About this RNA
This 207-nucleotide RNA was probed chemically with 2A3 and DMS. It was measured as part of the RMDB library M2RFPK. Conditions: 150 mM KOAc, 10 mM MgCl2 and 150 mM bicine (pH 8.5), 24 C. The DMS profile rests on 1,460 reads.
[RMDB]
RNA sequence: GGGAACGACUCGAGUAGAGUCGAAAACGUUGUCAUCGACAACACCCUAUGCAUUCAUGCUCUGUAAGGAUGCGCCGAAAGGUGAGCAAACCCGAGUUGCCCAGACCUGAAAUGCAACACUUUAGAGAAAACCCGAAGCAGUUCGCUGCUUCGGGAAGCAUAAUAUGAGCUUCGGCUCAUAUUAUGCAAAAGAAACAACAACAACAAC
Reactivity to 2A3 in 0.01 (KOAc 150mM, MgCl2 10mM, bicine 150mM(pH8.5), 24C), signal-to-noise 2, nucleotides 027 to 156: c090g020u020u000g010u020c090a240u120c300g020a000c000a010a000c000a050c020c000c010u040a070u060g000c010a000u000u000c030a040u120g010c020u000c000u010g020u020a010a040g000g010a000u010g000c000g000c000c000g050a090a030a000g010g000u020g020a030g000c000a050a000a010c030c040c020g080a070g070u030u060g080c000c020c050a040g030a080c030c010u080g050a040a080a080u060g000c030a000a050c020a060c160u080u160u280a090g010a000g020a060a090a040a050c000c000c000g000a010a000g000c000a000g010u060u130c190g030c090u010g000c000u000u000c000g000g000g000a000a000
Reactivity to DMS in 0.01 (KOAc 150mM, MgCl2 10mM, bicine 150mM(pH8.5), 24C), signal-to-noise 1, nucleotides 027 to 156: c120g030u000u000g000u000c030a130u020c100g010a060c020a050a000c000a100c030c000c030u000a070u000g000c000a080u000u030c070a280u010g000c030u010c140u000g050u010a300a100g000g000a090u000g010c020g000c030c030g000a050a100a090g050g050u000g000a100g050c030a100a070a110c020c030c020g010a180g040u020u000g010c020c030c010a190g010a110c040c000u000g000a080a050a070u010g000c020a030a190c010a080c020u010u000u000a070g010a220g000a080a090a170a090c010c000c000g000a010a030g040c000a070g030u000u010c300g020c000u020g000c000u020u020c010g020g010g030a000a010